Source: RMDB library OK2TRN, as collected in RNAgym.
This 177-nucleotide RNA was probed chemically with DMS.
For DMS the reverse transcriptase was MarathonRT.
For DMS, 1,309 sequencing reads were counted.

[RMDB]
RNA sequence: GGGAACGACUCGAGUAGAGUCGAAAAGUCGAACGAUGAAGCCCUUCGGGGUGGAUUAGUGGCGAACGGGUGAGUAACACGUGGGCAAUCUGCCCUUCACUCUGGGACAAGCCCUGGAAACGGGGUCAUGCGUUGCAUGGUUCGCCAUGCAACGCAUAAAAGAAACAACAACAACAAC
Reactivity to DMS in 0.01 (KOAc 150mM, MgCl2 10mM, bicine 150mM(pH8.5), 24C), signal-to-noise 2, nucleotides 027 to 126: g000u000c020g020a110a100c070g010a030u000g040a300a210g000c000c000c000u000u010c220g040g000g030g000u000g000g000a030u000u000a060g000u010g000g000c020g020a020a080c160g000g010g000u000g020a050g010u030a100a130c230a080c220g010u000g000g000g020c010a170a140u000c220u010g010c010c000c000u000u000c020a050c040u000c030u000g000g010g000a050c030a100a150g000c000c000c000u000g000g000a030a060a190c000g010g000g010g010u000c100